[RMDB]
RNA sequence: GGGAACGACUCGAGUAGAGUCGAAAAGACGGGUCUCCUGGGAAACCUUGGUCGCCCACGGCCCGAGCCUCUAUCGCACUUUUGCCGGCAAUCCUCGGGCCGCAUCGACCGCCAAGGCCAUGCGCGAGUGAGUCUAAUUGUUCGCAAUUAGACUCACAAAAGAAACAACAACAACAAC
Reactivity to DMS in 0.01 (KOAc 150mM, MgCl2 10mM, bicine 150mM(pH8.5), 24C), signal-to-noise 3, nucleotides 027 to 126: g000a110c070g000g000g000u000c050u010c000c040u040g020g020g020a090a070a130c050c040u000u010g000g040u000c160g020c070c030c060a300c040g000g000c000c000c000g000a020g000c130c040u000c140u030a110u060c030g010c010a100c230u020u030u010u000g010c100c050g010g000c100a090a140u080c150c000u030c000g020g000g010c000c000g020c070a070u030c090g000a080c060c080g000c050c060a040a070g000g000c070c020a030u000g010c070g000c050g000a140
Reactivity to 2A3 in 0.01 (KOAc 150mM, MgCl2 10mM, bicine 150mM(pH8.5), 24C), signal-to-noise 7, nucleotides 027 to 126: g080a020c060g010g000g030u030c030u020c050c020u030g030g000g050a090a080a050c010c010u020u060g040g010u080c030g050c010c010c000a010c020g010g000c000c000c000g000a010g010c010c020u120c070u150a200u170c050g010c040a100c070u050u100u180u280g080c090c040g050g000c040a050a110u100c010c010u000c000g000g000g000c000c010g010c000a010u040c020g060a040c000c020g010c020c010a020a010g040g000c010c020a100u140g000c060g000c020g030a050